[RMDB]
RNA sequence: GGGAACGACUCGAGUAGAGUCGAAAACAAGUUUGCAUCCAGCCCUACAGAUUGAUAAUAGGGUAUUCUUGUGCAAAUCUGUAAACUAUAUCUUUUUUUUUUAACACUUUUGAUUAUCAGAUUGUGCUCAGAAUUAAUUUUCAGGCAUGCUUAAUGAGAUUAUCAGGAUAUUCGUAUCCUGAUAAUCAAAAGAAACAACAACAACAAC
Reactivity to 2A3 in 0.01 (KOAc 150mM, MgCl2 10mM, bicine 150mM(pH8.5), 24C), signal-to-noise 3, nucleotides 027 to 156: c010a000a070g060u030u070u030g010c000a020u020c030c030a020g010c030c000c000u050a070c060a180g210a170u200u210g040a030u160a220a010u020a050g000g010g000u020a030u010u010c050u070u230g000u000g000c020a050a060a040u000c000u030g030u190a080a110a060c080u070a130u080a130u140c140u160u220u100u070u030u010u060u020u070u240a300a040c100a090c020u220u260u260u130g020a050u050u140a030u140c000a000g020a020u040u040g110u040g120c010u000c030a000g020a000a010u040u080a080a050u060u070u090u210c050a030g030g000c030a000u010g000c010u100u050a100a030u170g010a060